[RMDB]
RNA sequence: GGGAACGACUCGAGUAGAGUCGAAAAGAUAGCUAUGGUAUUCUGUAUGAUGACGGUUAUAUUCAAUUAUAACCCCUUCAAGACAUUACAAACUGUGAUAGCGACGGCACUAGCAGCAACCACCCUAACAGGUACCUCUGCGUACACCGUUCCUGUCUGGUAGACAACAAUUCGUUGUUGUCUACCAAAAAGAAACAACAACAACAAC
Reactivity to DMS in 0.01 (KOAc 150mM, MgCl2 10mM, bicine 150mM(pH8.5), 24C), signal-to-noise 2, nucleotides 027 to 156: g020a160u000a100g000c030u000a100u010g010g000u000a010u000u020c040u000g010u010a140u000g010a070u000g010a150c030g020g030u010u000a010u000a020u000u000c290a110a100u000u000a010u000a030a020c010c000c040c040u000u000c040a060a120g020a050c060a140u000u000a100c070a100a060a030c050u000g000u000g010a120u000a040g020c020g010a140c050g000g030c050a050c050u000a140g030c020a050g000c050a070a120c060c020a070c020c010c030u000a100a080c060a030g000g010u010a010c070c020u000c060u000g000c010g010u000a080c030a020c090c020g000u000u010c030c010u000g030u000c020
Reactivity to 2A3 in 0.01 (KOAc 150mM, MgCl2 10mM, bicine 150mM(pH8.5), 24C), signal-to-noise 3, nucleotides 027 to 156: g060a070u060a020g020c020u050a030u080g040g090u070a030u120u080c030u020g060u020a040u110g040a050u070g040a050c070g010g000u010u010a000u000a000u030u190c100a150a230u110u020a010u010a010a010c000c010c030c000u000u030c030a100a080g060a040c010a030u070u110a080c080a180a150a060c070u080g020u070g100a020u010a030g010c040g080a060c020g040g030c070a020c110u070a010g020c030a010g000c020a020a020c040c000a000c030c030c020u020a080a020c020a030g010g060u040a040c010c060u040c060u030g030c040g030u020a030c030a040c050c020g040u070u060c000c000u040g060u070c090

Background
Source: RMDB library OK3TST, as collected in RNAgym. Structure probing data (DMS and 2A3) for a 207-nucleotide construct. The 2A3 profile rests on 1,699 reads. 2A3 adducts were read by reverse transcription with SuperScript II with manganese.